Description:
An RNA of 177 nucleotides, treated with 2A3 and DMS and read out base by base. Source: RMDB library RFM100, as collected in RNAgym. For 2A3, 982 sequencing reads were counted. For DMS, 1,394 sequencing reads were counted. The RNA was probed in 150 mM KOAc, 10 mM MgCl2 and 150 mM bicine (pH 8.5) at 24 C.
[RMDB]
RNA sequence: GGGAACGACUCGAGUAGAGUCGAAAACCCGCUUAAUGCGGCAAGGUCAGAUCCAAACAGCAUCUGAAAAAGCGCCGCACAAAGAAAUAGCCCCGCUAAAGGCGACAUAUAGACCAGCAACGCCGAAUUCAAGCUAGUCAUUCGUGACUAGCUUGAAAAAAGAAACAACAACAACAAC
Reactivity to 2A3 in 0.01 (KOAc 150mM, MgCl2 10mM, bicine 150mM(pH8.5), 24C), signal-to-noise 2, nucleotides 027 to 126: c000c020c000g000c030u140u210a140a050u030g020c000g000g000c000a030a000g100g040u000c000a000g040a040u000c020c050a190a110a060c050a160g040c030a000u000c000u010g030a060a000a020a080a050g100c040g010c010c000g060c000a010c000a000a070a030g090a000a110a000u040a030g010c010c050c000c020g050c060u060a110a170a000g040g010c000g010a000c030a000u220a000u060a010g070a070c060c030a030g020c000a030a000c000g020c060c000g040a010a000
Reactivity to DMS in 0.01 (KOAc 150mM, MgCl2 10mM, bicine 150mM(pH8.5), 24C), signal-to-noise 2, nucleotides 027 to 126: c000c000c030g000c050u010u020a110a170u000g010c010g080g030c020a120a120g000g030u020c000a000g010a000u000c040c090a090a170a170c210a120g020c250a000u000c000u000g040a010a050a070a160a160g000c210g070c000c000g000c110a050c120a110a070a010g100a050a120a060u010a090g020c080c010c010c070g040c160u000a070a100a220g040g000c010g000a070c160a080u000a090u010a200g050a060c030c020a130g010c040a130a050c010g000c020c040g050a120a150